[RMDB]
RNA sequence: GGGAACGACUCGAGUAGAGUCGAAAAAUAAUGAAUUGCGGAACGCCUUAGGCUGGAAACAGAGCAGGGUUAGCAAUCGCUUGUAUACGGUGCAAAGUUUGCGAUGAGCGAUUAGUAUAUCUCGAAUCUCGUCAAGCAUGGUAAGCACACCAAUUGGGUGAUUACAAGACUUCGGUCUUGUAAUCACAAAAGAAACAACAACAACAAC
Reactivity to DMS in 0.01 (KOAc 150mM, MgCl2 10mM, bicine 150mM(pH8.5), 24C), signal-to-noise 1, nucleotides 027 to 156: a110u000a120a090u010g000a030a070u000u000g000c040g000g030a090a120c060g050c010c000u000u000a130g030g000c000u010g000g010a230a150a180c030a030g030a080g020c090a040g010g000g020u000u000a100g050c050a050a020u000c000g000c070u010u010g000u000a140u000a070c120g000g000u030g010c010a040a050a260g010u020u000u000g050c050g000a010u000g010a220g010c090g000a050u000u000a100g000u000a100u010a130u000c000u010c030g020a070a070u000c060u000c050g020u010c040a050a050g010c010a040u000g000g020u010a040a200g060c000a050c030a040c040c010a040a200u000u010g000g000
Reactivity to 2A3 in 0.01 (KOAc 150mM, MgCl2 10mM, bicine 150mM(pH8.5), 24C), signal-to-noise 2, nucleotides 027 to 156: a000u130a010a040u060g070a020a040u050u080g030c030g010g090a030a030c080g100c010c000u090u100a090g080g000c010u010g020g090a070a180a010c030a040g040a000g070c020a030g010g000g010u070u040a010g000c000a010a010u010c040g000c030u030u020g040u040a220u050a150c050g150g030u130g000c010a000a140a080g050u070u110u090g050c030g030a040u030g020a050g000c020g000a010u010u010a040g060u050a080u050a020u270c050u010c040g060a100a100u020c030u020c010g140u060c060a060a010g000c050a070u070g040g020u100a080a030g040c020a020c030a050c040c000a020a090u050u060g050g000